[RMDB]
RNA sequence: GGGAACGACUCGAGUAGAGUCGAAAAUAAAACCAUCGAGCUCUAAUGAGUUCGAUGGAGCAUGAAUGUCUCCUGAGUAUGACACCAUGCAAAUCAGGAGGUGUCGAGGAAAACUCGACGCCAAAAACGCUCCGGAUGAUUUCGAUCAUCCGGAGCGAAAAGAAACAACAACAACAAC
Reactivity to 2A3 in 0.01 (KOAc 150mM, MgCl2 10mM, bicine 150mM(pH8.5), 24C), signal-to-noise 1, nucleotides 027 to 126: u070a020a030a010a030c000c000a000u000c000g000a000g000c000u000c000u300a300a240u300g000a000g000u000u000c000g060a000u020g000g000a000g060c000a020u040g010a080a180u040g050u000c000u040c090c070u070g060a080g150u220a150u210g020a000c000a010c050c010a010u090g040c000a000a000a090u090c040a030g130g000a050g040g000u000g000u000c000g000a000g010g190a040a170a150a150c000u000c000g000a000c010g000c000c000a000a010a010a010a010